[RMDB]
RNA sequence: GGGAACGACUCGAGUAGAGUCGAAAACCAAUGGGAAACCAUUGGCAACUCGGAAACGAGUUGAACCGGGAAUUAGCAGGUAAACCGGCGACAAUGCGAUUUUAAGCAUUGUCGAUUACGCCCAUGUCGAUUUUAAGACAUGGAGCGAAACCUGCAAGGAACUAGCACCGUUCGCGGUGUUGGUUCCAAAAGAAACAACAACAACAAC
Reactivity to 2A3 in 0.01 (KOAc 150mM, MgCl2 10mM, bicine 150mM(pH8.5), 24C), signal-to-noise 3, nucleotides 027 to 156: c000c000a000a010u000g000g000g010a030a020a010c000c000a000u000u000g000g010c000a000a000c000u000c000g020g040a070a060a030c000g000a000g000u000u000g000a030a030c000c000g000g000g020a050a150u120u070a080g000c000a000g000g000u010a030a020a030c000c000g000g000c000g000a000c000a000a000u000g020c030g130a160u030u050u120u300a100a000g000c000a000u000u000g000u000c010g000a000u000u030a040c010g000c000c000c000a000u000g000u000c020g050a120u050u060u110u300a100a000g000a000c000a000u000g000g010a030g010c000g000a030a000a010c000c010u000g000c000a000a000
Reactivity to DMS in 0.01 (KOAc 150mM, MgCl2 10mM, bicine 150mM(pH8.5), 24C), signal-to-noise 1, nucleotides 027 to 156: c010c000a020a030u010g000g010g000a150a120a140c000c000a020u000u000g010g030c000a000a010c010u010c010g020g020a100a100a230c010g000a010g010u000u000g000a080a140c000c000g000g000g000a160a120u000u000a140g020c000a000g000g030u000a090a230a170c010c000g020g030c000g040a030c010a010a000u010g030c000g000a300u000u000u000u000a100a270g000c000a000u000u010g000u000c000g000a070u000u000a060c000g010c010c000c000a000u000g030u010c000g020a300u020u000u000u000a170a170g010a010c010a010u000g000g000a030g070c000g000a030a130a300c000c000u000g000c000a220a300
Structure probing data (2A3 and DMS) for a 207-nucleotide construct. Conditions: 150 mM KOAc, 10 mM MgCl2 and 150 mM bicine (pH 8.5), 24 C. Reactivities are given for positions 27 through 156.